Chemical mapping of a 207-nucleotide RNA with 2A3. For 2A3 the reverse transcriptase was SuperScript II with manganese. Values cover nucleotides 27 to 156. The RNA was probed in 150 mM KOAc, 10 mM MgCl2 and 150 mM bicine (pH 8.5) at 24 C.
RNA sequence: GGGAACGACUCGAGUAGAGUCGAAAAGUGAUUCGUGGCGCUUCUGGAGGACACUGCGACACUGCCUUUGCGGCUAAGAUGAGUUUGGUUAUUUCACCACUUAUCCGCGGACGCAUCCCAACUUUUGUAGAUGAGGUUAAUACGGUCAUUACACCAAGAUUACGGUGCGAUUCGUCGCACCGUAAUCAAAAGAAACAACAACAACAAC
Reactivity to 2A3 in 0.01 (KOAc 150mM, MgCl2 10mM, bicine 150mM(pH8.5), 24C), signal-to-noise 1, nucleotides 027 to 156: g040u030g050a250u210u000c070g000u000g040g030c000g010c020u090u000c030u170g150g000a180g140g000a020c010a000c040u010g000c000g050a000c000a020c040u040g000c090c000u150u080u000g000c000g000g040c000u000a000a000g110a130u050g000a030g040u090u200u090g130g000u090u120a130u150u240u070c070a000c000c000a010c000u010u010a010u000c000c000g000c050g070g000a000c000g000c000a000u000c080c000c000a110a130c120u070u130u120u040g110u080a080g140a120u140g120a100g090g000u010u190a000a020u090a170c040g030g030u000c070a050u060u190a150c030a010c080c070a020a020